[RMDB]
RNA sequence: GGGAACGACUCGAGUAGAGUCGAAAAGAUAUGGACGUACACCAGAAUGAGGACGUUGAAAUCGGAAACGAUGGAGUCCACAUUCUCCCUGUACGUCCUAAGUCAAAGUCUCAGUUCGCUGAGACAACGGUUAGUAGCUCUUCGGAGCUACUAACCGAAAAGAAACAACAACAACAAC
Reactivity to DMS in 0.01 (KOAc 150mM, MgCl2 10mM, bicine 150mM(pH8.5), 24C), signal-to-noise 1, nucleotides 027 to 126: g000a010u010a300u010g000g020a000c000g010u000a010c010a060c150c290a000g010a050a000u000g030a070g070g020a010c000g020u000u020g030a050a140a020u000c000g000g000a190a080a210c000g010a000u020g000g000a030g000u010c000c000a080c030a010u030u000c020u000c000c070c020u000g070u000a000c010g000u000c000c000u000a000a020g020u000c050a160a020a160g000u000c000u000c000a000g020u040u010c150g060c000u000g010a000g000a000c010a080a020
Reactivity to 2A3 in 0.01 (KOAc 150mM, MgCl2 10mM, bicine 150mM(pH8.5), 24C), signal-to-noise 1, nucleotides 027 to 126: g040a010u110a080u150g010g020a000c000g000u000a000c010a020c060c100a010g000a020a000u050g000a060g000g000a010c020g210u300u050g050a040a050a000u010c000g020g030a050a090a000c000g030a000u000g070g000a010g010u050c000c000a000c010a010u000u020c010u030c030c010c000u040g000u010a010c000g000u000c000c010u010a050a010g070u020c040a110a050a000g000u000c000u010c000a040g000u090u170c300g000c060u000g000a020g000a020c010a000a030